Conditions: 150 mM KOAc, 10 mM MgCl2 and 150 mM bicine (pH 8.5), 24 C. Chemical mapping of a 177-nucleotide RNA with DMS.
RNA sequence: GGGAACGACUCGAGUAGAGUCGAAAAAGCAUGCACAGAAAUUUAUAACACGCCUUUACAGUUGGUUAUUCGAAAAGUCUGGGCGUGACUAUAUCCCCGGCCGCCAACUGCAGUUUUAUGCUCAGUGACAUCAGAGUCGAUUCGUCGACUCUGAUGUAAAAGAAACAACAACAACAAC
Reactivity to DMS in 0.01 (KOAc 150mM, MgCl2 10mM, bicine 150mM(pH8.5), 24C), signal-to-noise 1, nucleotides 027 to 126: a030g010c030a020u000g020c050a060c060a040g010a070a110a070u000u010u020a030u000a020a090c020a030c060g000c020c040u000u020u010a090c140a090g010u010u000g010g010u000u000a080u010u000c180g000a070a020a040a110g000u000c030u000g000g020g000c000g020u000g000a060c020u000a070u000a100u000c030c000c020c080g000g030c090c130g010c050c070a050a020c030u000g010c120a040g000u000u010u000u000a080u030g010c020u000c010a040g000u010g020